[RMDB]
RNA sequence: GGGAACGACUCGAGUAGAGUCGAAAAGAAUUUUAGAAAAGCAAGGCCGGAGAAGCAGCACCCGAAAUGCUGAGGGCUAAUUUGGGGUUUAGGAGCAACCUUUCCUGGAAAAAGUGGAAAGGAAAGAGAGUGAGUGAUUAUUCGUAAUCACUCACUCAAAAGAAACAACAACAACAAC
Reactivity to DMS in 0.01 (KOAc 150mM, MgCl2 10mM, bicine 150mM(pH8.5), 24C), signal-to-noise 3, nucleotides 027 to 126: g020a120a090u020u050u030u050a100g000a120a070a060a120g010c060a070a100g010g010c020c030g010g010a110g000a100a070g010c000a040g020c100a080c000c000c120g010a070a070a070u020g040c050u060g020a110g000g020g020c030u020a020a050u020u030u000g010g000g000g000u000u000u000a050g030g010a060g010c150a110a100c000c000u000u000u000c000c000u000g000g080a090a120a040a180a090g020u010g010g020a000a020a010g000g000a020a070a090g020a120
Reactivity to 2A3 in 0.01 (KOAc 150mM, MgCl2 10mM, bicine 150mM(pH8.5), 24C), signal-to-noise 2, nucleotides 027 to 126: g030a100a120u140u110u170u210a090g010a010a090a000a000g020c040a040a040g060g000c050c010g110g000a090g000a110a000g010c080a000g000c040a020c000c050c010g100a030a050a030u060g000c000u010g010a060g000g080g000c000u000a020a110u030u070u090g020g000g000g030u020u030u060a070g030g070a060g010c040a030a020c020c010u000u000u020c000c000u030g060g090a180a110a000a000a030g180u070g050g000a000a000a000g010g050a020a060a000g100a000
Conditions: 150 mM KOAc, 10 mM MgCl2 and 150 mM bicine (pH 8.5), 24 C. An RNA of 177 nucleotides, treated with DMS and 2A3 and read out base by base. The DMS profile rests on 3,981 reads. It was measured as part of the RMDB library OK1LIB.